The record gives the reactivity of an RNA of 177 nucleotides to 2A3 and DMS. For DMS, 2,287 sequencing reads were counted. Values cover nucleotides 27 to 126.
RNA sequence: GGGAACGACUCGAGUAGAGUCGAAAAGAAGUUGUGUUCGCACAACUUCAAAAGCUAGUAGGUACUGGGCAAGUAGUACCAAGUAGUAGCCCGUUCAAGUAAAAAUCAACCUCUUCGGAGGUUGAAACUCUACUGGAUGAUUCGUCAUCCAGUAGAGAAAAGAAACAACAACAACAAC
Reactivity to 2A3 in 0.01 (KOAc 150mM, MgCl2 10mM, bicine 150mM(pH8.5), 24C), signal-to-noise 2, nucleotides 027 to 126: g000a010a000g010u000u010g010u010g040u080u090c210g050c070a000c000a010a000c000u000u000c000a000a000a000a000g000c010u010a000g060u030a040g100g000u000a020c020u080g080g130g070c170a160a040g150u060a000g000u000a110c000c020a020a020g000u000a000g000u000a030g060c030c010c020g030u080u090c130a140a020g010u070a100a080a050a030a070u020c000a000a000c010c010u030c030u060u110c220g130g000a000g000g000u010u000g000a000a000a000
Reactivity to DMS in 0.01 (KOAc 150mM, MgCl2 10mM, bicine 150mM(pH8.5), 24C), signal-to-noise 3, nucleotides 027 to 126: g010a020a010g010u010u000g010u000g010u000u020c250g000c010a000c020a010a000c000u000u000c000a050a050a130a240g010c010u000a020g000u010a210g010g010u000a000c000u010g010g010g020c280a060a200g010u000a030g000u000a000c000c000a060a150g000u000a020g010u000a100g000c000c000c000g010u000u000c180a110a130g010u010a010a050a070a110a160u000c000a000a000c010c000u010c000u000u020c220g010g000a000g010g010u000u010g010a010a060a040
Annotation:
For 2A3, 2,739 sequencing reads were counted. The data come from the RNA Mapping Database (RMDB), library M2PK50.